RNA sequence: GGGAACGACUCGAGUAGAGUCGAAAAAUGAAUCCAAAUAAGAAGAUAAUAACCAUCGGAUCAAUCUGUAUGGUAACUGGAAUGGUUAGCUUAAUGUUACAAAUUGGGAACUUGAUCUCAAUAUGGGUCAGUCAUUCAAUUCACACAGGGAAUCAACCACCGUCUUGCUUUUCGAAGCAAGACGGUGAAAAGAAACAACAACAACAAC
Reactivity to 2A3 in 0.01 (KOAc 150mM, MgCl2 10mM, bicine 150mM(pH8.5), 24C), signal-to-noise 1, nucleotides 027 to 156: a000u050g030a010a120u020c020c020a060a000a000u160a030a030g130a040a030g030a160u090a070a020u140a090a000c000c000a000u030c010g000g010a070u100c000a050a150u080c140u060g040u130a010u070g010g010u030a000a040c010u030g000g010a140a040u060g030g030u070u100a000g010c040u000u170a120a000u190g070u180u040a010c030a010a100a080u000u000g060g000g000a040a000c010u070u300g060a070u110c040u030c010a200a120u240a300u300g000g030g000u000c010a060g030u010c000a000u000u000c000a010a010u000u090c100a000c100a040c040a020g100g000g140a040a040u150c000a000a090c000